[RMDB]
An RNA of 177 nucleotides, treated with 2A3 and DMS and read out base by base. For 2A3 the reverse transcriptase was SuperScript II with manganese. For DMS, 1,617 sequencing reads were counted. The 2A3 profile rests on 1,058 reads. For DMS the reverse transcriptase was MarathonRT.
RNA sequence: GGGAACGACUCGAGUAGAGUCGAAAAUAGUCCAUGACUGAACCAGAAUUUAAGCCCAGGAUGUCAAGUUCCAGAAUUGGUACACUCAGCCUCAAUACUGUGCUGCCUUCAAAUAUUCUGACAAUCAAGCUAUUUAUACCUUCGGGUAUAAAUAGCUAAAAGAAACAACAACAACAAC
Reactivity to 2A3 in 0.01 (KOAc 150mM, MgCl2 10mM, bicine 150mM(pH8.5), 24C), signal-to-noise 2, nucleotides 027 to 126: u100a000g030u000c010c010a090u200g040a060c020u020g020a000a060c010c040a070g030a130a090u060u080u130a070a000g000c000c030c000a010g050g000a030u060g080u090c060a040a090g060u090u000c040c020a020g050a130a110u120u050g050g000u130a100c060a020c050u090c020a010g050c000c010u080c050a060a080u090a200c020u000g050u090g000c000u010g060c010c020u030u030c030a060a090a010u090a050u130u050c030u030g050a060c030a000a030u140c020a020
Reactivity to DMS in 0.01 (KOAc 150mM, MgCl2 10mM, bicine 150mM(pH8.5), 24C), signal-to-noise 3, nucleotides 027 to 126: u000a070g000u000c010c060a140u000g020a050c040u000g000a070a080c070c010a090g020a120a060u020u000u000a100a160g020c020c000c050a080g010g030a060u010g010u000c110a070a090g000u000u000c050c040a060g010a060a110u000u000g000g000u010a050c080a050c050u010c060a070g000c050c030u000c060a050a090u000a080c070u010g030u000g030c060u020g000c030c020u000u000c090a030a120a060u010a070u000u000c030u020g010a110c130a070a090u000c100a100